[RMDB]
RNA sequence: GGGAACGACUCGAGUAGAGUCGAAAAAGAGCUAUGCCUAAUAUGUGUAGAAUCUUCGCUUCACUCAUAUUAGCUCGUAAACAUGGCACUUGUUGUACUACAAGGGACAGAUUUUAUCGCUUGGCAAAAAGACAAUGCUUCGGCAUUGUCAAAAGAAACAACAACAACAAC
Reactivity to DMS in 0.01 (KOAc 150mM, MgCl2 10mM, bicine 150mM(pH8.5), 24C), signal-to-noise 4, nucleotides 027 to 129: a070g000a030g010c020u040a000u010g020c100c050u040a000a000u030a020u020g020u000g040u050a090g030a040a030u000c170u110u030c260g030c280u010u030c020a090c000u000c020a010u030a010u000u000a030g030c100u030c010g030u060a060a100a140c190a000u000g010g080c020a110c150u040u010g000u000u000g040u000a100c130u030a050c040a000a000g000g000g000a050c110a000g020a110u090u050u040u030a110u060c080g020c060u020u040g010g000c230a040a030a040a070a060
Reactivity to 2A3 in 0.01 (KOAc 150mM, MgCl2 10mM, bicine 150mM(pH8.5), 24C), signal-to-noise 6, nucleotides 027 to 129: a000g060a000g000c010u020a010u090g020c000c000u010a000a000u020a010u020g030u000g020u060a080g030a050a030u050c060u190u230c240g060c100u030u020c000a010c020u000c000a020u010a010u020u010a010g000c020u030c040g070u080a050a010a050c070a090u030g020g000c030a000c050u010u020g010u010u010g040u090a060c040u030a020c030a000a000g020g040g010a000c010a060g160a170u040u010u020u110a070u090c060g010c140u020u050g000g000c000a000a030a040a020a000

Source: RMDB library 15KLIB, as collected in RNAgym. Structure probing data (DMS and 2A3) for a 170-nucleotide construct. For DMS, 13,459 sequencing reads were counted. The reactions ran in a buffer of 150 mM KOAc, 10 mM MgCl2 and 150 mM bicine (pH 8.5), at 24 C.